[RMDB]
RNA sequence: GGGAACGACUCGAGUAGAGUCGAAAAAGUAGUUCUUGGUCAGUGAGGGUCUGGAUUCAGGAGUGGCUGAAAUGACAGUGUGGGGAGGACUGACAACUAGACCUAGCUGUGCAGAACUAAUUUGAAAGUAGAGUUCCAUGCACUCACUCCAGGACCAACCUAUGGUAGUGUUCGCACUACCAUAGGUAAAAGAAACAACAACAACAAC
Reactivity to DMS in 0.01 (KOAc 150mM, MgCl2 10mM, bicine 150mM(pH8.5), 24C), signal-to-noise 2, nucleotides 027 to 156: a110g050u000a030g030u000u000c000u000u000g030g020u000c080a040g050u000g010a130g000g030g000u000c060u000g020g010a190u000u000c050a090g000g020a080g050u000g030g050c010u000g030a050a050a130u010g010a130c070a050g030u010g040u000g010g000g010g020a240g010g010a230c040u000g000a080c050a080a160c060u000a070g010a120c020c010u000a290g000c010u000g000u000g000c050a100g010a020a020c000u010a030a000u000u000u000g000a080a090a140g000u000a130g010a110g030u000u010c020c060a100u000g000c020a040c040u010c000a050c010u000c010c030a090g000g000a060c030c030a080
Reactivity to 2A3 in 0.01 (KOAc 150mM, MgCl2 10mM, bicine 150mM(pH8.5), 24C), signal-to-noise 5, nucleotides 027 to 156: a000g100u080a000g010u040u010c030u060u100g070g020u080c080a000g000u020g040a130g000g000g050u000c010u010g020g030a070u060u100c030a040g020g060a080g070u090g050g060c010u010g030a040a120a100u110g020a040c050a050g030u030g020u110g070g020g000g000a050g020g030a030c020u040g010a010c030a100a060c050u030a000g030a010c000c000u000a020g030c040u040g030u060g030c020a000g010a010a010c020u030a040a070u090u080u180g150a120a070a000g040u100a050g030a000g040u060u000c030c010a020u070g020c000a010c020u020c000a010c010u010c020c020a020g020g060a020c060c010a030
This 207-nucleotide RNA was probed chemically with DMS and 2A3. Conditions: 150 mM KOAc, 10 mM MgCl2 and 150 mM bicine (pH 8.5), 24 C. The data come from the RNA Mapping Database (RMDB), library OK3TST. Reactivities are given for positions 27 through 156.